[RMDB]
The data come from the RNA Mapping Database (RMDB), library M2RFPK.
This 207-nucleotide RNA was probed chemically with 2A3 and DMS.
The 2A3 profile rests on 5,999 reads.
RNA sequence: GGGAACGACUCGAGUAGAGUCGAAAAAGGCACUUCGCAAUGUGUGCUCAAACAUUGCUUAUUCAAACACGCUUCACAAUGUGCGACAAAGAAACAUUGUUAUAAGAGCUAAUGUUUUAGCAUUGGCAAAACCGAGUUAGCUUCGGCUAACUCGGAACUUCUUUGUUGACUUCGGUCAACAAAGAAGAAAAGAAACAACAACAACAAC
Reactivity to 2A3 in 0.01 (KOAc 150mM, MgCl2 10mM, bicine 150mM(pH8.5), 24C), signal-to-noise 6, nucleotides 027 to 156: a000g180g000c010a000c010u010u010c020g000c000a000a010u000g000u000g010u020g020c120u120c210a040a040a000c000a000u000u000g000c020u110u140a220u180u160c140a040a090a060c100a010c070g000c000u010u010c010a000c000a010a000u000g000u000g010c020g060a080c160a100a160a040g080a010a060a000c000a000u000u000g020u040u040a150u030a100a110g040a010g010c000u010a000a000u010g040u030u210u060u200a040g010c000a000u000u020g010g000c000a010a030a010a100c000c000g000a000g010u010u000a000g000c020u040u030c280g030g000c010u000a000a000c000u000c000g000g000a000a000
Reactivity to DMS in 0.01 (KOAc 150mM, MgCl2 10mM, bicine 150mM(pH8.5), 24C), signal-to-noise 1, nucleotides 027 to 156: a150g070g010c010a060c080u010u020c130g040c100a070a000u020g050u000g000u000g000c070u000c240a100a050a100c010a010u000u000g040c040u010u000a040u000u010c150a060a090a100c100a120c040g010c090u000u010c060a080c130a080a020u000g060u000g020c000g000a220c060a060a060a130g000a090a090a090c010a010u000u000g030u000u000a100u000a060a060g020a230g000c000u000a080a070u000g040u020u000u020u000a160g040c020a020u000u020g090g030c050a000a040a100a130c000c020g000a030g040u010u000a000g020c000u000u000c300g040g000c030u000a020a000c000u000c000g010g000a020a000